[RMDB]
An RNA of 177 nucleotides, treated with DMS and 2A3 and read out base by base.
RNA sequence: GGGAACGACUCGAGUAGAGUCGAAAAGAUAUGGAUUAUUCGCUAGUGACAAGGUCGGAAACGACCUUGAAUCACUUGGACCGAGAUAAUCCUAAGUCAAACAGUACUUCGUUCGCGAAGUACUGAAGGUAAUAGCGUACUUCGGUACGCUAUUACCAAAAGAAACAACAACAACAAC
Reactivity to DMS in 0.01 (KOAc 150mM, MgCl2 10mM, bicine 150mM(pH8.5), 24C), signal-to-noise 3, nucleotides 027 to 126: g000a000u000a010u000g000g000a010u010u010a010u000u000c000g040c010u020a010g010u010g040a030c010a010a000g010g010u000c010g020g000a010a000a040c000g010a000c000c000u010u020g000a080a120u000c010a000c000u000u000g010g010a020c300c020g000a060g010a010u000a020a000u010c000c000u000a000a090g010u000c010a120a130a250c010a010g000u010a000c000u000u000c010g020u000u020c200g000c000g040a000a000g000u000a000c000u000g000a030a030
Reactivity to 2A3 in 0.01 (KOAc 150mM, MgCl2 10mM, bicine 150mM(pH8.5), 24C), signal-to-noise 1, nucleotides 027 to 126: g000a000u020a010u050g020g010a000u000u000a000u040u000c020g000c040u030a020g010u000g010a010c000a020a000g030g000u010c000g000g000a000a000a000c010g000a020c010c000u000u020g000a020a010u060c000a000c000u040u300g000g000a010c030c000g050a090g010a210u000a000a010u000c000c000u010a010a000g000u010c070a100a050a060c000a060g020u000a000c000u000u020c020g100u040u090c180g010c000g150a010a000g030u000a000c010u000g010a060a020
For 2A3 the reverse transcriptase was SuperScript II with manganese.
DMS adducts were read by reverse transcription with MarathonRT.
The reactions ran in a buffer of 150 mM KOAc, 10 mM MgCl2 and 150 mM bicine (pH 8.5), at 24 C.